[RMDB]
RNA sequence: GGGAACGACUCGAGUAGAGUCGAAAAGAUAUGGAGUUGCCAUGUGGUACAGACAUGCUGGAGUAUGGGUCGGAAACGACCUGAAACAGCAACAGCUGUACGUAACAUCAUGGCAACUCCUAAGUCAGUGUCCUAAUAUCUUCGGAUAUUAGGACACAAAAGAAACAACAACAACAAC
Reactivity to 2A3 in 0.01 (KOAc 150mM, MgCl2 10mM, bicine 150mM(pH8.5), 24C), signal-to-noise 3, nucleotides 027 to 126: g000a000u050a020u070g000g000a000g000u000u000g000c000c000a010u000g020u040g030g000u010a000c010a000g030a010c080a300u300g010c020u010g000g010a020g010u060a210u300g000g000g030u000c020g010g000a020a020a010c020g000a000c000c000u010g000a000a010a010c000a010g040c120a160a000c070a110g020c000u000g020u020a000c000g000u010a070a090c020a140u170c010a010u000g000g000c000a000a000c000u010c000c000u000a000a000g000u000c020a040
Reactivity to DMS in 0.01 (KOAc 150mM, MgCl2 10mM, bicine 150mM(pH8.5), 24C), signal-to-noise 3, nucleotides 027 to 126: g000a020u010a190u010g000g000a050g020u000u000g000c010c000a020u000g010u020g020g000u000a040c000a020g010a010c040a300u020g010c020u000g000g000a090g010u000a070u040g000g010g010u010c010g030g030a060a030a090c000g030a000c010c000u000g000a100a150a190c010a010g010c010a050a050c230a080g000c000u010g000u000a000c010g010u030a120a300c160a070u020c000a010u000g000g000c000a000a000c000u000c000c000u000a010a060g010u010c020a140